[RMDB]
RNA sequence: GGGAACGACUCGAGUAGAGUCGAAAAGAUAUGGAGAAUCCAUAGGCUUGGAUUUAUCGGAAACGAUUGUCAGCCUCAUGGAAUUCUCCUAAGUCAAAAGCCUAUUAUCCUUCGGGAUAAUAGGCAACCAACAUAGAGUCUUCGGACUCUAUGUUGGAAAAGAAACAACAACAACAAC
Reactivity to DMS in 0.01 (KOAc 150mM, MgCl2 10mM, bicine 150mM(pH8.5), 24C), signal-to-noise 2, nucleotides 027 to 126: g000a030u000a300u010g000g000a030g030a020a040u020c010c010a000u000a010g010g020c010u000u000g020g010a040u000u020u000a000u000c020g000g010a140a140a190c000g000a000u000u000g010u000c000a010g000c010c000u000c240a000u000g000g020a050a080u000u000c010u000c000c010u000a010a070g000u010c040a120a080a070a150g000c000c010u000a000u000u000a000u000c000c010u000u000c250g030g010g000a010u000a000a030u000a010g010g020c000a000a000
Reactivity to 2A3 in 0.01 (KOAc 150mM, MgCl2 10mM, bicine 150mM(pH8.5), 24C), signal-to-noise 2, nucleotides 027 to 126: g010a020u090a040u090g010g000a000g010a000a000u000c010c000a010u000a010g010g010c040u130u280g160g010a060u300u300u250a020u060c000g000g020a120a040a040c020g020a000u000u030g030u020c010a000g010c000c010u030c020a000u030g000g020a100a050u010u000c000u020c000c000u030a140a010g040u000c040a050a060a080a080g000c000c010u000a000u000u000a010u000c000c010u030u100c300g140g020g000a000u010a010a000u000a000g010g000c000a000a010